Chemical mapping of a 177-nucleotide RNA with 2A3 and DMS. For 2A3, 1,553 sequencing reads were counted.
RNA sequence: GGGAACGACUCGAGUAGAGUCGAAAAGAUAUGGACGCACCGAUGAGUGUCAACUCGGAAACGAGUUAACACGAGGUGGUCCUAAGUCAAACUGGCCUAAAAGUGGUUCGCCACUUUUAGGCCAGAAGAGCAUAUCUACCUUCGGGUAGAUAUGCUCAAAAGAAACAACAACAACAAC
Reactivity to 2A3 in 0.01 (KOAc 150mM, MgCl2 10mM, bicine 150mM(pH8.5), 24C), signal-to-noise 1, nucleotides 027 to 126: g030a000u090a040u100g000g000a020c060g080c300a030c030c010g280a300u250g190a070g040u000g000u010c030a000a010c000u010c010g020g030a100a090a020c010g000a010g000u000u000a000a000c030a000c000g040a080g000g020u000g000g000u000c000c000u000a160a000g060u010c000a010a120a130c000u030g060g000c000c000u000a000a000a010a040g010u010g050g070u070u150c230g050c060c000a000c010u000u000u020u000a000g040g020c000c000a000g000a000a040
Reactivity to DMS in 0.01 (KOAc 150mM, MgCl2 10mM, bicine 150mM(pH8.5), 24C), signal-to-noise 2, nucleotides 027 to 126: g000a030u010a300u010g010g010a010c000g030c020a010c000c010g020a200u010g000a180g000u000g020u010c020a000a000c000u010c000g000g000a080a090a210c000g010a010g010u000u000a030a000c010a000c010g000a070g020g050u010g010g000u000c000c010u000a020a090g000u000c080a080a100a160c000u000g000g000c000c010u000a000a000a020a000g020u000g000g010u010u010c270g010c010c000a010c010u000u000u000u000a000g010g000c000c020a000g010a000a050
The RNA was probed in 150 mM KOAc, 10 mM MgCl2 and 150 mM bicine (pH 8.5) at 24 C. 2A3 adducts were read by reverse transcription with SuperScript II with manganese.